[RMDB]
RNA sequence: GGGAACGACUCGAGUAGAGUCGAAAAGGAGAGUAGAUGAUUCUCGUUAAGUGUGUGUGACUGGGAUGUCGUCACACAACGAAGCGAGAGCGCGGUGAAUCAUCGCAUCAGCUCCAAAGAAAGAAAAACGCAUUAUACCUUUCGAGGUAUAAUGCGUAAAAGAAACAACAACAACAAC
Reactivity to DMS in 0.01 (KOAc 150mM, MgCl2 10mM, bicine 150mM(pH8.5), 24C), signal-to-noise 4, nucleotides 027 to 126: g000g010a030g000a080g030u040a040g000a020u000g010a030u000u000c000u000c030g000u000u010a070a200g010u050g010u000g050u000g000u020g000a000c000u020g030g030g010a110u030g010u020c100g000u000c000a000c000a010c000a070a000c010g010a210a110g000c000g030a100g000a070g010c090g000c000g020g000u030g000a080a070u010c010a020u000c010g010c150a150u030c100a110g000c010u000c000c000a070a070a090g010a090a130a070g010a040a100a060a120
Reactivity to 2A3 in 0.01 (KOAc 150mM, MgCl2 10mM, bicine 150mM(pH8.5), 24C), signal-to-noise 6, nucleotides 027 to 126: g030g010a040g010a030g030u210a050g010a040u030g010a030u070u000c000u000c010g020u060u050a100a070g040u120g020u020g000u000g010u010g170a000c030u130g030g070g140a100u200g120u180c020g020u010c000a000c000a000c000a000a020c010g000a090a010g020c010g010a020g000a010g030c030g000c030g010g040u120g050a050a040u070c010a000u000c020g000c030a100u070c020a030g040c000u000c000c000a000a050a010g100a000a070a010g150a020a060a030a010